[RMDB]
RNA sequence: GGGAACGACUCGAGUAGAGUCGAAAAGGGGUCAACAACUUCCGGAGUGCGAUAAGUAUACUGAAGCCUCCACGGUAUACUUUUGACGCACGCGAAACGGAAGUAUUGUUGACGGAGGCACCCAAAAGGUAAGAAAGUCUUCGGACUUUCUUACCAAGACUCUUCUGUAGUUCGCUACAGAAGAGUCAAAAGAAACAACAACAACAAC
Reactivity to 2A3 in 0.01 (KOAc 150mM, MgCl2 10mM, bicine 150mM(pH8.5), 24C), signal-to-noise 1, nucleotides 027 to 156: g070g000g050g010u000c000a000a020c000a000a000c010u020u000c010c010g060g020a110g000u020g000c010g040a110u040a280a000g000u000a000u000a000c000u000g040a090a010g000c000c020u000c000c000a010c020g000g000u000a000u010a000c000u050u000u070u170g300a130c050g000c000a010c010g020c050g110a130a050a010c000g000g010a000a000g000u000a100u030u130g000u000u000g000a000c020g010g000a000g000g000c000a020c010c000c000a020a100a050a020g000g000u000a000a000g010a000a000a000g010u000c040u090u150c260g010g000a000c000u000u000u000c000u010u000a000c000c000a000a000
Structure probing data (2A3) for a 207-nucleotide construct. For 2A3, 1,213 sequencing reads were counted. It was measured as part of the RMDB library RNAMAK. The reactions ran in a buffer of 150 mM KOAc, 10 mM MgCl2 and 150 mM bicine (pH 8.5), at 24 C.